[RMDB]
RNA sequence: GGGAACGACUCGAGUAGAGUCGAAAAUCCAGCAUGACGGCAUGCUGGACGAGGCGCGCGAUGCCCUUGAGCGUGGGGCCGCCGGCGAUAAUGUACGGCGCCGGGACGGGCACGGCCACGCGGAAGCCCAUUUUGUCGUCGCAUCCGCACGCGGUCGGGUGAUGAUGGAUUUCGAUCCAUCAUCACCAAAAGAAACAACAACAACAAC
Reactivity to 2A3 in 0.01 (KOAc 150mM, MgCl2 10mM, bicine 150mM(pH8.5), 24C), signal-to-noise 2, nucleotides 027 to 156: u000c000c010a000g050c000a000u130g010a000c030g030g100c000a010u000g000c000u000g000g000a000c000g020a020g000g060c090g000c000g050c100g180a160u300g050c050c000c010u000u050g020a020g010c000g000u010g000g000g030g000c020c020g000c000c010g000g040c000g020a020u140a230a270u300g080u160a130c170g030g060c060g000c000c030g000g020g040a020c040g010g010g080c020a010c050g120g050c000c000a020c010g050c000g010g070a040a000g050c020c000c000a020u130u170u100u010g000u000c020g040u070c000g000c030a060u090c040c010g000c020a040c090g080c000g030g000u160c140g110
An RNA of 207 nucleotides, treated with 2A3 and read out base by base. The 2A3 profile rests on 632 reads. The reactions ran in a buffer of 150 mM KOAc, 10 mM MgCl2 and 150 mM bicine (pH 8.5), at 24 C. Reactivities are given for positions 27 through 156.